The data come from the RNA Mapping Database (RMDB), library OK3TST. An RNA of 207 nucleotides, treated with 2A3 and DMS and read out base by base. For DMS the reverse transcriptase was MarathonRT. Reactivities are given for positions 27 through 156.
RNA sequence: GGGAACGACUCGAGUAGAGUCGAAAAGGAUGACUUCUACGGUUAUUUACAAAAGCACUUUUCUAUGAUGAUUCUUUCUGAUGAUGGUGUUGUGUGCUAUAAUAAAAUUUAUGCUGAACUUGGUUACAUUGCUGAUAUUAGUGCUUUUAAAGCCACUAAUUGUUCUCUUUUUCGAAAGAGAACAAUUAAAAGAAACAACAACAACAAC
Reactivity to 2A3 in 0.01 (KOAc 150mM, MgCl2 10mM, bicine 150mM(pH8.5), 24C), signal-to-noise 3, nucleotides 027 to 156: g060g020a080u060g020a030c040u080u040c050u160a080c080g010g000u110u120a120u130u180u100a190c070a030a080a020a020g010c010a010c010u080u080u090u070c060u100a090u130g050a040u040g050a050u100u050c030u060u140u030c090u060g090a100u040g010a030u030g000g010u010g020u050u050g040u020g000u000g050c030u020a020u020a290a050u120a020a170a040a020u080u150u110a070u160g000c040u000g010a070a060c020u020u070g010g030u050u030a020c010a050u070u070g030c020u040g050a030u040a030u190u070a030g010u010g000c000u030u020u020u100a080a150a030g010c030c020a020c030u040
Reactivity to DMS in 0.01 (KOAc 150mM, MgCl2 10mM, bicine 150mM(pH8.5), 24C), signal-to-noise 2, nucleotides 027 to 156: g020g000a070u000g000a080c030u000u010c030u030a160c110g030g010u000u010a040u000u000u010a100c090a050a050a080a090g020c000a030c010u000u000u000u020c040u000a110u010g020a090u000g000a120u010u010c040u000u000u000c050u010g010a050u000g010a060u000g010g030u000g010u000u000g010u010g010u000g010c020u000a040u000a070a150u000a070a070a070a150u000u000u000a040u020g010c050u000g020a060a100c050u000u000g020g020u000u010a090c070a060u000u010g020c030u010g010a100u000a070u000u000a030g030u000g020c010u020u000u010u000a040a070a080g030c000c020a110c160u000